Annotation: This 177-nucleotide RNA was probed chemically with DMS and 2A3. For 2A3, 9,012 sequencing reads were counted. DMS adducts were read by reverse transcription with MarathonRT.

RNA sequence: GGGAACGACUCGAGUAGAGUCGAAAAACAUCAAUAUCCAACAACUGCUCACCUUAAAUUUUUAAGUCGACAAAUGCAAAAUGAUUUAGCUAAUUUUGCUAAAAGCGGUAAAAUGCCUUGGCCGAUGUCAUAUGAUUCUUUUCGAAGAAUCAUAUGAAAAAGAAACAACAACAACAAC
Reactivity to DMS in 0.01 (KOAc 150mM, MgCl2 10mM, bicine 150mM(pH8.5), 24C), signal-to-noise 7, nucleotides 027 to 126: a080c070a070u010c070a070a100u010a080u000c030c020a080a080c070a080a070c060u000g010c030u000c060a110c070c030u000u010a030a060a150u010u000u000u000u010a050a090g010u000c040g020a060c120a050a060a060u010g010c010a010a020a020a020u010g010a130u010u000u010a110g010c100u020a090a050u000u000u000u000g000c000u000a040a050a080a080g020c020g000g010u000a040a050a070a080u000g010c040c040u000u000g010g020c090c040g010a070u010g000
Reactivity to 2A3 in 0.01 (KOAc 150mM, MgCl2 10mM, bicine 150mM(pH8.5), 24C), signal-to-noise 6, nucleotides 027 to 126: a000c010a040u080c020a060a100u060a080u170c040c010a020a030c010a010a060c070u020g010c010u020c020a050c020c010u100u050a060a100a200u150u120u050u040u090a090a040g020u060c020g030a050c060a050a110a020u120g020c000a000a010a030a070u070g030a070u080u130u110a010g000c010u030a060a090u050u080u080u040g000c000u030a030a080a060a020g020c000g050g000u040a090a070a020a050u060g020c010c020u030u030g040g000c020c040g030a020u060g050